[RMDB]
Chemical mapping of a 177-nucleotide RNA with DMS and 2A3. It was measured as part of the RMDB library OK2TST. Conditions: 150 mM KOAc, 10 mM MgCl2 and 150 mM bicine (pH 8.5), 24 C. For 2A3 the reverse transcriptase was SuperScript II with manganese.
RNA sequence: GGGAACGACUCGAGUAGAGUCGAAAAGCUCGUAAGGGUCGAAUCGGGCCCACAAUCCGUUCUUGUCAUCGCGGAACGUCGGUACACCGCUUUCCGCGGAGAUCCCCGCGCCGCUGAGCACCGCCACAAUUGAUCACCAAUUCGUUGGUGAUCAAUUAAAAGAAACAACAACAACAAC
Reactivity to DMS in 0.01 (KOAc 150mM, MgCl2 10mM, bicine 150mM(pH8.5), 24C), signal-to-noise 5, nucleotides 027 to 126: g010c020u000c010g010u020a150a140g000g000g020u000c020g000a090a070u000c070g010g000g010c010c000c020a040c170a060a080u010c070c030g010u010u000c040u000u000g010u000c050a060u000c020g010c010g000g000a010a020c060g020u020c040g020g010u010a160c300a130c040c010g000c010u000u000u010c040c030g010c000g010g000a030g000a070u010c040c020c000c050g020c100g020c030c030g020c020u000g000a090g020c060a110c050c040g000c030c060a060c190
Reactivity to 2A3 in 0.01 (KOAc 150mM, MgCl2 10mM, bicine 150mM(pH8.5), 24C), signal-to-noise 3, nucleotides 027 to 126: g020c000u010c040g080u130a120a190g070g010g040u040c040g040a030a060u170c070g030g000g000c000c030c000a080c050a010a030u050c040c020g030u050u030c010u070u100g060u030c020a050u060c070g020c010g000g000a020a010c020g200u280c030g060g000u070a060c160a100c100c010g000c020u010u030u000c000c000g010c010g000g000a020g000a020u020c010c000c010c000g010c020g000c020c000g030c040u040g010a010g020c020a030c010c040g030c010c010a070c030